An RNA of 177 nucleotides, treated with DMS and read out base by base. It was measured as part of the RMDB library TTRINS. The RNA was probed in 150 mM KOAc, 10 mM MgCl2 and 150 mM bicine (pH 8.5) at 24 C. For DMS, 2,292 sequencing reads were counted.
[RMDB]
RNA sequence: GGGAACGACUCGAGUAGAGUCGAAAAGAUAUGGAUCGUAGAGAAACUGUAACAAAAGGCGAGGAUCUGGUGUCUCGGAAACGAGACCCAGGGAGCCUAGUUACAGUUUCUCUACGAUCCUAAGUCACUUAAAACUUCAGUUCGCUGAAGUUUUAAGAAAAGAAACAACAACAACAAC
Reactivity to DMS in 0.01 (KOAc 150mM, MgCl2 10mM, bicine 150mM(pH8.5), 24C), signal-to-noise 1, nucleotides 027 to 126: g000a020u010a300u000g010g010a000u010c000g030u000a020g000a020g000a010a010a020c000u000g020u010a020a000c010a110a100a130a070g000g010c000g000a050g010g020a020u010c000u000g000g030u010g010u000c000u000c000g000g000a050a110a130c020g000a000g000a010c010c010c000a010g010g000g000a010g040c000c000u010a050g020u000u000a000c000a000g000u000u000u020c010u010c000u000a000c000g000a000u000c000c010u000a010a070g000u010c000a290